[RMDB]
RNA sequence: GGGAACGACUCGAGUAGAGUCGAAAAAAGCUUGGUGGUGAUGGCGUUGGUGCUGGUAUGGCAAAGUUUGGUGAUUCGACGACUGCUUUGGCUGGUCUGUCGAGACUACUUGGCGGUACAGGUGGUAGUACCACUAGUACUUCGGUACUAGUGGUACAAAAGAAACAACAACAACAAC
Reactivity to 2A3 in 0.01 (KOAc 150mM, MgCl2 10mM, bicine 150mM(pH8.5), 24C), signal-to-noise 4, nucleotides 027 to 126: a000a000g060c040u050u040g010g010u020g000g020u050g030a060u040g030g030c020g020u030u040g040g030u050g020c010u020g010g040u070a070u070g080g000c030a040a020a040g030u070u110u110g040g000u050g070a210u070u010c010g000a010c000g000a010c020u020g040c030u150u130u150g130g030c050u060g010g010u020c080u100g000u020c020g010a010g010a010c010u030a020c010u030u060g050g000c030g000g020u040a040c010a050g020g040u030g010g020u050a060
Reactivity to DMS in 0.01 (KOAc 150mM, MgCl2 10mM, bicine 150mM(pH8.5), 24C), signal-to-noise 4, nucleotides 027 to 126: a070a030g000c050u000u000g020g030u000g010g000u000g000a070u010g010g010c080g010u000u000g010g010u010g010c050u010g010g010u000a060u000g010g000c040a060a050a060g010u000u000u010g020g010u000g010a180u000u000c020g000a040c030g000a030c020u000g010c020u000u010u010g040g010c030u010g010g010u000c010u000g030u000c030g010a040g000a060c040u000a040c050u000u000g010g010c050g010g010u000a060c080a080g000g010u000g000g010u000a100

An RNA of 177 nucleotides, treated with 2A3 and DMS and read out base by base. The RNA was probed in 150 mM KOAc, 10 mM MgCl2 and 150 mM bicine (pH 8.5) at 24 C. For 2A3 the reverse transcriptase was SuperScript II with manganese.